Source: RMDB library TTRINS, as collected in RNAgym. This 177-nucleotide RNA was probed chemically with 2A3 and DMS. The RNA was probed in 150 mM KOAc, 10 mM MgCl2 and 150 mM bicine (pH 8.5) at 24 C. For 2A3 the reverse transcriptase was SuperScript II with manganese.
RNA sequence: GGGAACGACUCGAGUAGAGUCGAAAAGAUAUGGAAAUCGAUGAGCUAUGAAGUACACUCAGUAUGAGAUGGGUCGGAAACGACCCAUCUCAGAACCGUGUAUGGAGCUCUACCGAUUUCCUAAGUCGUACUUCAUGAAGUUCGCUUCAUGAAGUACAAAAGAAACAACAACAACAAC
Reactivity to 2A3 in 0.01 (KOAc 150mM, MgCl2 10mM, bicine 150mM(pH8.5), 24C), signal-to-noise 1, nucleotides 027 to 126: g030a020u110a100u140g000g000a000a000a020u000c010g010a010u040g000a020g010c000u060a300u300g020a070a010g000u000a010c030a000c010u000c000a030g030u030a020u020g010a010g040a020u020g000g030g040u020c030g000g130a170a070a000c030g000a010c060c000c010a000u020c010u050c000a010g010a030a010c000c010g030u000g110u010a000u000g000g000a000g000c000u000c000u000a020c040c000g000a000u000u000u000c000c000u000a000a030g050u050c040
Reactivity to DMS in 0.01 (KOAc 150mM, MgCl2 10mM, bicine 150mM(pH8.5), 24C), signal-to-noise 2, nucleotides 027 to 126: g010a090u000a300u010g000g000a010a010a000u000c010g020a030u000g000a010g030c010u010a300u020g010a110a300g000u010a000c010a010c010u000c000a090g010u000a060u000g000a000g020a030u000g020g020g020u000c060g000g000a080a140a230c000g020a030c040c010c000a000u000c010u020c000a000g000a070a120c300c300g000u000g000u000a010u000g000g010a010g010c000u000c010u020a060c090c000g000a010u000u000u000c020c000u010a010a070g020u010c080

Source information: The DMS profile rests on 1,463 reads.